[RMDB]
RNA sequence: GGGAACGACUCGAGUAGAGUCGAAAAGAAAGAAAGAAAGAUGGCAGUAGAGGAGGGGGCCGUUACACUGUCAGAGAUGUACUCUGAGGGUCUCACAGUGAACCGGUCUCUUUUCCUGCUGCUUCAAUUGGUCAUUGAUAUUCGUAUCAAUGACCAAAAAAGAAACAACAACAACAAC
Reactivity to DMS in 0.01 (KOAc 150mM, MgCl2 10mM, bicine 150mM(pH8.5), 24C), signal-to-noise 4, nucleotides 027 to 126: g010a110a090a090g020a100a080a090g000a100a120a120g000a070u030g010g000c000a010g050u000a020g010a060g010g000a010g030g000g000g010g010c010c000g010u010u000a220c000a010c000u000g000u020c170a070g000a010g010a150u010g010u020a150c040u000c130u010g010a090g010g000g010u000c010u000c030a120c010a000g000u010g000a070a060c300c030g010g000u000c000u000c000u010u000u010u010c010c000u010g000c020u000g000c000u000u000c060a070a110
Reactivity to 2A3 in 0.01 (KOAc 150mM, MgCl2 10mM, bicine 150mM(pH8.5), 24C), signal-to-noise 4, nucleotides 027 to 126: g130a010a070a010g120a040a070a040g090a080a120a010g100a060u150g030g000c000a000g020u030a010g040a130g020g010a000g000g000g000g000g000c000c000g000u010u030a010c000a010c000u020g010u110c090a020g010a010g000a030u100g140u300a120c040u080c180u300g050a230g110g120g000u000c000u000c020a010c000a000g000u000g010a030a010c030c020g020g000u000c000u010c000u070u010u010u050c000c020u010g000c000u000g000c000u010u010c000a000a030
Source: RMDB libraries RFM100 and RFMREP, as collected in RNAgym. This 177-nucleotide RNA was probed chemically with DMS and 2A3. For 2A3 the reverse transcriptase was SuperScript II with manganese. Reactivities are given for positions 27 through 126. The RNA was probed in 150 mM KOAc, 10 mM MgCl2 and 150 mM bicine (pH 8.5) at 24 C.